[RMDB]
RNA sequence: GGGAACGACUCGAGUAGAGUCGAAAAGGCCAGUUACCAACACAUAAGAUUCGAUGUUUAUAAAAUGCUGGAUGAGGCAAUUUGCUUGCAAAGGGCUCGCUAGUAAUAAUGGAUAUUGGGUUUUAUGCCUUCAAGAUGAAUUCGUUCAUCUUGAAGGAAAAGAAACAACAACAACAAC
Reactivity to DMS in 0.01 (KOAc 150mM, MgCl2 10mM, bicine 150mM(pH8.5), 24C), signal-to-noise 5, nucleotides 027 to 126: g010g020c030c030a120g000u000u000a100c080c040a100a080c170a300c030a020u010a010a020g010a030u000u010c000g010a020u000g010u000u000u000a030u010a040a070a110a080u000g000c010u000g000g000a060u010g010a090g020g010c020a030a010u000u000u000g000c030u020u000g020c010a020a030a030g000g000g000c000u000c010g010c010u000a010g010u000a020a030u010a160a040u010g000g000a010u010a020u000u000g000g010g000u000u000u000u000a020u000g010
Reactivity to 2A3 in 0.01 (KOAc 150mM, MgCl2 10mM, bicine 150mM(pH8.5), 24C), signal-to-noise 9, nucleotides 027 to 126: g100g050c020c020a010g020u040u080a080c030c030a090a040c030a010c000a070u020a010a010g010a030u010u020c010g010a000u010g010u010u010u020a060u030a030a150a040a020u030g000c000u010g040g230a300u070g020a080g060g060c010a030a040u010u020u040g020c040u060u090g010c000a010a010a020g020g020g020c010u000c010g000c000u010a000g010u030a020a080u060a100a020u040g020g000a000u000a020u030u010g020g000g000u000u010u000u020a010u030g040
Structure probing data (DMS and 2A3) for a 177-nucleotide construct. Conditions: 150 mM KOAc, 10 mM MgCl2 and 150 mM bicine (pH 8.5), 24 C. Values are in units of 0.01, from 0 to 300, in steps of 10.